[RMDB]
RNA sequence: GGGAACGACUCGAGUAGAGUCGAAAAUUUGCCUGAUAACGCACACACGCAGCAAUGGCGUAAGACGUAAUGCGAAAUCAAGCAGUUAGCGGGCUGUGGAUUGCAGCUUGGCCGGCAAAUGGAAUCACUAAAGGGUAUAAUUCGUUAUACCCUUUAGAAAAGAAACAACAACAACAAC
Reactivity to 2A3 in 0.01 (KOAc 150mM, MgCl2 10mM, bicine 150mM(pH8.5), 24C), signal-to-noise 8, nucleotides 027 to 126: u050u030u030g010c000c000u020g010a010u010a050a020c010g000c000a010c010a010c000a000c060g000c010a000g010c030a140a300u280g300g000c010g000u000a010a010g050a020c010g000u010a050a020u030g000c000g000a080a010a020u020c010a020a030g060c020a050g070u090u150a040g020c010g000g020g000c020u010g000u020g110g260a220u130u300g010c000a010g010c010u030u070g190g010c010c030g020g010c010a040a000a010u050g020g060a050a020u120c030a030
Reactivity to DMS in 0.01 (KOAc 150mM, MgCl2 10mM, bicine 150mM(pH8.5), 24C), signal-to-noise 9, nucleotides 027 to 126: u000u010u010g010c000c020u000g000a010u010a040a300c020g010c000a020c140a110c240a030c000g020c010a230g010c020a240a120u020g030g010c010g020u000a010a010g030a120c010g050u000a140a130u010g010c000g010a050a240a010u000c010a050a070g010c050a060g010u010u020a070g010c030g000g000g000c010u000g020u000g010g010a100u020u030g010c010a010g000c010u000u000g010g040c010c050g010g010c050a030a040a050u010g000g010a100a090u010c110a160